Structure probing data (DMS and 2A3) for a 177-nucleotide construct. For 2A3, 1,218 sequencing reads were counted.

[RMDB]
RNA sequence: GGGAACGACUCGAGUAGAGUCGAAAAGGUGACCGCAUUGAUCGGCCCCUCGGGUAUCGCCGCCCGGUCGAAUACCAACACGAAGUAGGAGGCGCCCGGUGCCGCCGCACGCACGAUCGAUUGCAGAUAGGAUAGCUGAAUUCGUUCAGCUAUCCUAAAAAGAAACAACAACAACAAC
Reactivity to DMS in 0.01 (KOAc 150mM, MgCl2 10mM, bicine 150mM(pH8.5), 24C), signal-to-noise 3, nucleotides 027 to 126: g020g020u010g000a170c080c040g000c060a130u010u010g020a070u000c000g010g000c030c050c020c030u010c040g020g010g010u000a060u010c050g010c040c080g030c050c060c090g020g000u040c040g020a150a080u010a090c070c050a120a110c140a140c140g000a090a150g010u010a060g000g000a300g000g000c060g000c060c040c070g020g000u000g000c030c070g000c090c050g020c060a020c080g020c070a080c040g010a030u000c020g010a050u000u030g010c050a090g000a210
Reactivity to 2A3 in 0.01 (KOAc 150mM, MgCl2 10mM, bicine 150mM(pH8.5), 24C), signal-to-noise 1, nucleotides 027 to 126: g090g020u070g130a160c050c030g000c020a120u040u070g060a040u120c010g060g010c040c050c000c000u010c040g010g030g000u020a060u170c010g010c040c020g040c060c040c010g080g000u000c000g010a040a010u030a150c060c000a120a070c030a010c140g130a120a010g040u110a060g010g040a030g030g000c010g000c000c010c000g000g000u070g070c000c000g060c000c020g010c030a040c000g040c000a060c040g010a040u020c000g000a020u030u260g000c000a030g080a210